[RMDB]
This 177-nucleotide RNA was probed chemically with 2A3 and DMS. For DMS, 2,672 sequencing reads were counted. The RNA was probed in 150 mM KOAc, 10 mM MgCl2 and 150 mM bicine (pH 8.5) at 24 C. For 2A3 the reverse transcriptase was SuperScript II with manganese.
RNA sequence: GGGAACGACUCGAGUAGAGUCGAAAAUAUUUUUGAUGAAUGUCAUAUAAUGGAAGCACCAGCGAUGGCUUUUUAUUGUUUGCUUAAGGAAUAUAAUUUUGAUGGAAAAAUCAUAAAAGUCUCAGCAGAUAAUCAAUAUGUUCGCAUAUUGAUUAUCAAAAGAAACAACAACAACAAC
Reactivity to 2A3 in 0.01 (KOAc 150mM, MgCl2 10mM, bicine 150mM(pH8.5), 24C), signal-to-noise 4, nucleotides 027 to 126: u090a040u040u090u090u080u080g080a060u070g040a110a230u170g020u020c020a010u090a020u060a240a050u060g040g040a090a030g040c030a060c100c030a020g030c050g050a040u040g020g000c000u070u040u040u040u050a090u000u080g080u080u020u090g040c010u050u050a080a050g030g030a130a090u150a050u050a200a180u030u070u090u050g020a020u020g010g040a300a160a060a020a000u040c000a000u040a030a070a010a030g050u000c030u000c050a040g030c010a010
Reactivity to DMS in 0.01 (KOAc 150mM, MgCl2 10mM, bicine 150mM(pH8.5), 24C), signal-to-noise 2, nucleotides 027 to 126: u020a040u000u020u030u000u000g010a040u030g010a170a040u050g000u050c010a050u010a040u030a050a030u000g000g010a090a090g000c090a130c040c020a040g030c160g000a070u000g000g010c030u000u020u000u030u060a010u020u000g020u030u000u000g000c040u030u010a080a160g000g000a030a030u010a060u020a090a070u010u000u000u010g000a220u010g000g000a070a070a090a100a030u010c070a010u010a030a030a080a090g010u000c000u000c080a060g000c070a070